[RMDB]
RNA sequence: GGGAACGACUCGAGUAGAGUCGAAAAGAUAUGGAGAGUACGAGAAGUAUUCGGAAACGAAUAUACUUCGAUGAGUAUCCUCCUAAGUCAAAACCUGAUUCAGUGUCUUCGGACACUGAAUCAGGAAGGCCAAAGAUAAGUUCGCUUAUCUUUGGCCAAAAGAAACAACAACAACAAC
Reactivity to DMS in 0.01 (KOAc 150mM, MgCl2 10mM, bicine 150mM(pH8.5), 24C), signal-to-noise 1, nucleotides 027 to 126: g000a000u000a300u000g000g010a010g010a070g030u000a010c010g000a220g010a030a010g020u000a020u000u000c010g020g010a050a020a140c010g000a030a100u000a120u010a050c010u000u010c000g010a110u010g000a300g000u000a030u000c020c000u010c000c030u010a080a090g000u010c050a080a110a080a100c000c000u000g010a010u010u000c000a010g010u000g030u000c000u000u000c220g000g010a030c000a000c010u010g000a010a040u000c000a000g010g010a010a010
Reactivity to 2A3 in 0.01 (KOAc 150mM, MgCl2 10mM, bicine 150mM(pH8.5), 24C), signal-to-noise 1, nucleotides 027 to 126: g000a000u050a010u140g000g000a000g010a000g030u010a010c060g020a010g020a170a000g010u010a030u000u000c010g000g000a050a060a030c010g030a040a000u180a020u020a110c000u030u000c050g130a180u130g030a030g030u000a040u100c000c000u000c010c000u020a180a040g050u040c030a010a000a060a070c000c000u010g010a000u000u010c010a020g020u000g000u050c020u050u100c240g170g000a000c000a020c000u020g000a000a000u000c000a010g000g000a000a010